Chemical mapping of a 177-nucleotide RNA with DMS and 2A3. 2A3 is a SHAPE reagent: it acylates the 2'-hydroxyl of flexible nucleotides of all four kinds. Values are in units of 0.01, from 0 to 300, in steps of 10. Source: RMDB libraries RFM100 and RFMREP, as collected in RNAgym.

[RMDB]
RNA sequence: GGGAACGACUCGAGUAGAGUCGAAAAGCAGAAAAGGGUGUCAUCCGAGUAGCUAACACUGGGAUCCAGGAAACUUGAUUACAAAUAAAUAUGCUGUUUUAAUGAAUUUGUGUAAUAGAAGCUAGAUGCAACAGAUAUUAUUCGUAAUAUCUGUUGCAAAAGAAACAACAACAACAAC
Reactivity to DMS in 0.01 (KOAc 150mM, MgCl2 10mM, bicine 150mM(pH8.5), 24C), signal-to-noise 4, nucleotides 027 to 126: g010c050a070g010a060a080a100a080g000g000g020u000g020u000c040a040u010c020c030g010a080g010u000a050g000c040u000a070a060c150a070c040u000g010g010g000a040u000c040c050a090g000g000a070a080a080c050u010u010g010a060u000u020a040c030a030a060a090u010a060a070a080u000a060u030g030c030u000g010u000u020u010u010a060a090u020g000a060a060u020u010u000g020u010g000u010a030a040u010a080g000a040a070g010c070u010a060g010a180u010
Reactivity to 2A3 in 0.01 (KOAc 150mM, MgCl2 10mM, bicine 150mM(pH8.5), 24C), signal-to-noise 5, nucleotides 027 to 126: g070c020a000g060a040a140a020a010g060g040g020u040g020u030c040a110u040c020c010g030a010g050u030a010g010c110u080a060a010c060a010c070u050g040g000g020a000u030c050c030a030g020g040a060a030a030c020u070u080g050a060u110u080a050c050a020a110a060u170a050a080a020u170a120u110g020c020u040g110u100u060u050u180a090a080u080g100a050a050u070u090u090g040u010g020u030a050a060u050a170g110a100a010g040c070u060a030g000a140u080
The RNA was probed in 150 mM KOAc, 10 mM MgCl2 and 150 mM bicine (pH 8.5) at 24 C.